[RMDB]
RNA sequence: GGGAACGACUCGAGUAGAGUCGAAAAUCAAUUCAAAUGGCGGAUUAGUCACUGUAGGUAGUGAAAUUUAUACUGCUUUACGGAAUUACAAAGGCAAUGUUACAGCAGAAGUAACUGGAAUGGCCGCUAGUGCAGCAUCAUUUUGUAUUAUGGGUGCGGACAUGUUUGGAUUCGUCCAAACAUGUCCAAAAGAAACAACAACAACAAC
Reactivity to 2A3 in 0.01 (KOAc 150mM, MgCl2 10mM, bicine 150mM(pH8.5), 24C), signal-to-noise 2, nucleotides 027 to 156: u080c030a020a090u160u020c050a000a000a140u080g020g000c000g050g070a020u060u020a050g050u090c040a000c070u030g010u020a020g000g040u000a030g020u000g090a130a000a000u080u110u030a220u060a040c000u000g000c010u070u080u070a020c040g000g020a010a040u180u020a110c090a030a090a000g030g010c040a030a040u090g010u060u020a000c020a040g050c020a000g050a200a010g050u040a000a010c050u020g050g060a080a080u100g060g010c030c000g000c080u050a070g030u020g170c070a050g000c020a060u000c010a000u040u060u080u110g140u090a080u130u030a020u160g020g000g000u010g010c030
Reactivity to DMS in 0.01 (KOAc 150mM, MgCl2 10mM, bicine 150mM(pH8.5), 24C), signal-to-noise 1, nucleotides 027 to 156: u000c060a010a110u000u020c100a100a080a070u000g010g030c000g000g030a100u010u010a110g020u040c020a180c010u000g020u020a030g010g010u030a010g000u000g020a070a170a250u010u020u000a130u000a090c000u000g040c010u000u010u010a230c010g020g020a110a050u010u020a100c090a070a090a090g030g020c090a050a140u000g020u000u000a060c040a120g000c060a140g020a000a230g030u000a030a050c020u010g020g010a090a050u000g010g030c020c010g020c060u000a050g010u020g030c070a030g000c050a010u000c070a050u000u010u000u000g000u010a080u000u010a110u020g030g000g010u000g040c100

This 207-nucleotide RNA was probed chemically with 2A3 and DMS. The DMS profile rests on 2,075 reads.